[RMDB]
Source information
The data come from the RNA Mapping Database (RMDB), library M2RFPK. Chemical mapping of a 207-nucleotide RNA with DMS. Conditions: 150 mM KOAc, 10 mM MgCl2 and 150 mM bicine (pH 8.5), 24 C.
RNA sequence: GGGAACGACUCGAGUAGAGUCGAAAAGAAAUUCCCGAUCGGCGGUAAAGUCCGCGAGCCGAACGAAAAGGGUUUGGCAGGAACCGGUGAGAUUCCGGUACCGACAGUAUAGUCUGGAUGGAAGAAGGUAGCCUCCUCUCGUUCGCGAGAGGAGGAACUCUUUCAGAGAGUUCGCUCUCUGAAAGAGAAAAGAAACAACAACAACAAC
Reactivity to DMS in 0.01 (KOAc 150mM, MgCl2 10mM, bicine 150mM(pH8.5), 24C), signal-to-noise 1, nucleotides 027 to 156: g000a150a110a250u000u000c000c010c030g000a170u000c040g000g000c010g000g020u010a060a270a090g010u000c000c000g030c000g000a300g000c000c000g000a000a040c000g000a060a130a150a230g000g010g030u000u000u000g000g010c020a080g010g010a050a030c010c000g000g130u000g010a300g000a300u000u000c000c000g010g010u000a000c000c090g000a060c110a000g000u000a180u000a140g000u000c110u000g020g020a120u010g000g000a060a110g000a090a120g010g010u000a090g000c010c000u000c010c000u000c000u020c000g010u000u010c190g080c050g030a030g000a000g020g000a030g000g000a000a010